Chemical mapping of a 177-nucleotide RNA with 2A3 and DMS. DMS adducts were read by reverse transcription with MarathonRT. For 2A3, 1,676 sequencing reads were counted. The DMS profile rests on 954 reads. Source: RMDB library TTRDEL, as collected in RNAgym.
[RMDB]
RNA sequence: GGGAACGACUCGAGUAGAGUCGAAAAGAUAUGGAAUGUAACGCUUUUGACGCUUAUUCGGAAACGAAAAGCGAUAAGCGUUGACAUUCCUAAGUCAAACUACCUACCCCUUCGGGGGUAGGUAGAACGUCAAUAGCCUGUUCGCAGGCUAUUGACGAAAAGAAACAACAACAACAAC
Reactivity to 2A3 in 0.01 (KOAc 150mM, MgCl2 10mM, bicine 150mM(pH8.5), 24C), signal-to-noise 1, nucleotides 027 to 126: g030a000u070a030u130g000g000a000a020u010g050u000a000a010c000g040c030u190u090u280u300g300a080c030g000c000u090u110a250u300u000c000g000g020a000a080a030c010g030a000a010a010a010g000c010g030a060u020a200a010g010c000g010u000u010g000a000c000a000u020u000c000c000u000a050a010g010u040c050a030a060a160c010u010a000c040c000u000a000c020c020c000c000u000u150c260g160g000g030g010g000u050a000g000g000u000a000g000a000a000
Reactivity to DMS in 0.01 (KOAc 150mM, MgCl2 10mM, bicine 150mM(pH8.5), 24C), signal-to-noise 1, nucleotides 027 to 126: g010a030u010a300u020g000g020a000a000u000g010u000a010a010c000g020c000u000u010u020u010g020a180c110g000c000u000u000a150u010u000c000g000g000a040a050a180c010g000a000a060a030a030g020c020g020a140u000a020a050g000c010g000u000u010g020a010c010a010u000u000c000c010u010a000a020g000u000c030a080a080a250c010u000a010c000c000u000a020c000c000c000c000u000u000c260g030g000g000g010g020u030a000g000g020u000a000g000a040a120